Record summary:
This 207-nucleotide RNA was probed chemically with DMS and 2A3. For 2A3 the reverse transcriptase was SuperScript II with manganese. Values cover nucleotides 27 to 156. The data come from the RNA Mapping Database (RMDB), library OK3TST. The 2A3 profile rests on 2,414 reads. DMS adducts were read by reverse transcription with MarathonRT.

RNA sequence: GGGAACGACUCGAGUAGAGUCGAAAAUUCUCCCGUGAAUCUUGUGUGUAGACGAGAACAAGAACUGGAAGAGCUCGGGGCCGAGAUAGAUCUCACCUGUCACGAGAAGAUGUUUACAGACAGCGAGGACGAGGGAGAAGGUGCUCCUCAAAAUGGCGUUUUAAAUAUACUUCGGUAUAUUUAAAACAAAAGAAACAACAACAACAAC
Reactivity to DMS in 0.01 (KOAc 150mM, MgCl2 10mM, bicine 150mM(pH8.5), 24C), signal-to-noise 2, nucleotides 027 to 156: u010u000c050u000c000c040c000g030u000g020a200a110u000c010u020u010g030u000g020u000g070u010a130g010a020c040g040a190g000a050a110c020a090a100g000a070a240c030u010g000g020a180a140g000a150g000c010u000c000g000g020g030g000c060c300g030a080g000a190u000a150g010a100u010c030u000c020a110c080c070u000g010u010c020a090c030g020a120g000a060a090g040a120u030g000u000u000u000a110c050a080g040a090c040a070g020c040g020a040g000g010a120c150g010a170g010g020g000a060g010a070a070g000g010u000g070c000u000c010c020u000c100a040a060a070a130u010g000g000c230
Reactivity to 2A3 in 0.01 (KOAc 150mM, MgCl2 10mM, bicine 150mM(pH8.5), 24C), signal-to-noise 4, nucleotides 027 to 156: u020u000c000u010c000c010c000g050u160g060a050a070u010c010u020u010g000u010g020u000g010u080a020g020a030c040g050a020g060a220a050c090a160a050g090a140a080c090u100g010g020a080a000g030a060g090c010u010c020g010g000g020g000c030c090g040a020g020a020u150a090g140a160u030c010u010c030a040c010c070u070g030u060c050a000c070g010a010g010a050a010g060a050u150g010u040u040u030a010c010a010g090a020c000a000g030c050g120a020g030g030a010c030g030a140g010g000g000a010g000a010a000g030g020u110g030c020u030c010c010u080c060a070a100a020a040u080g070g020c060